This 177-nucleotide RNA was probed chemically with DMS and 2A3.

[RMDB]
RNA sequence: GGGAACGACUCGAGUAGAGUCGAAAACAGAUUGGCAACAACCUUUUUCAGUUCUUCUCUCUCAGGCAGAAGGAUCUUCUGUGAUUCAUGAAACCGUGCAUGAGAAUCGGCUAGGGUAUUUACGCGGUCCCAAUGGAUAGUUCGCUAUCCAUUGGGAAAAAGAAACAACAACAACAAC
Reactivity to DMS in 0.01 (KOAc 150mM, MgCl2 10mM, bicine 150mM(pH8.5), 24C), signal-to-noise 3, nucleotides 027 to 126: c160a050g010a090u000u000g000g000c160a100a140c050a050a080c040c020u010u000u000u000u000c070a140g010u000u000c030u000u000c040u000c040u000c050u000c040a060g030g020c060a040g010a060a070g010g010a070u010c030u000u000c040u020g020u000g000a060u020u000c020a060u010g010a090a090a110c050c030g000u010g010c040a040u000g000a060g010a060a050u000c060g000g020c050u000a070g000g000g020u010a060u000u000u000a090c080g000c030g000g000
Reactivity to 2A3 in 0.01 (KOAc 150mM, MgCl2 10mM, bicine 150mM(pH8.5), 24C), signal-to-noise 2, nucleotides 027 to 126: c050a000g070a090u050u070g030g000c060a090a030c020a000a060c030c010u030u060u000u120u080c040a030g000u060u000c000u070u070c000u000c000u000c000u000c060a030g040g040c010a010g000a080a020g070g030a040u030c010u090u030c050u020g160u140g030a070u090u050c030a050u080g140a080a010a020c020c010g020u040g030c000a010u080g020a010g040a060a050u080c010g040g000c030u030a060g030g050g080u100a190u070u130u080a050c020g000c010g050g050

DMS adducts were read by reverse transcription with MarathonRT. The data come from the RNA Mapping Database (RMDB), library OK2TRN. As a SHAPE reagent, 2A3 marks flexible, mostly unpaired nucleotides at the ribose 2'-OH.